This 207-nucleotide RNA was probed chemically with 2A3 and DMS. For DMS, 3,101 sequencing reads were counted. Values cover nucleotides 27 to 156. For 2A3 the reverse transcriptase was SuperScript II with manganese. Conditions: 150 mM KOAc, 10 mM MgCl2 and 150 mM bicine (pH 8.5), 24 C.
RNA sequence: GGGAACGACUCGAGUAGAGUCGAAAAGUUAUGCUCUAGCUGCCUAAUGGCGGUGCGGGAAACCCACUCUAAAGUCCUUAGGGUUAGCCCCUUAAGGCGGGGUUCGGAGGCACCUGGCAACAGAAGCUGAAACUGUGCACAUUCGUGUGCACAGUAACAACUUGGAUAACUUCGGUUAUCCAAGUUGAAAAGAAACAACAACAACAAC
Reactivity to 2A3 in 0.01 (KOAc 150mM, MgCl2 10mM, bicine 150mM(pH8.5), 24C), signal-to-noise 4, nucleotides 027 to 156: g040u100u090a100u300g020c010u020c030u040a030g010c010u030g000c010c010u300a300a180u230g000g000c030g040g050u030g010c080g020g040g010a040a060a060c000c030c000a090c040u120c070u140a120a130a240g300u060c000c000u010u000a010g000g000g020u030u040a040g020c000c020c020c010u050u030a010a000g000g000c000g000g000g000g000u000u140c110g060g020a040g050g000c020a010c000c000u060g280g000c000a010a010c000a020g020a030a000g000c010u030g020a100a000a000c000u000g000u010g000c000a000c000a000u020u120c260g120u040g000u000g020c000a000c000a000g010u010a010a010
Reactivity to DMS in 0.01 (KOAc 150mM, MgCl2 10mM, bicine 150mM(pH8.5), 24C), signal-to-noise 2, nucleotides 027 to 156: g000u000u000a090u000g020c010u010c010u010a210g080c010u000g040c020c010u000a090a160u000g040g010c060g020g030u000g040c080g000g010g010a080a080a140c000c010c040a140c040u000c070u000a080a100a110g010u000c030c040u000u000a040g000g000g030u000u000a240g000c150c300c000c020u000u000a010a010g000g040c000g010g000g000g020u000u000c010g050g000a250g020g010c000a030c000c020u000g000g030c010a080a130c020a130g010a070a070g050c030u000g040a170a020a070c000u000g000u000g000c000a020c000a150u000u010c300g040u000g000u000g020c000a000c000a010g020u000a040a130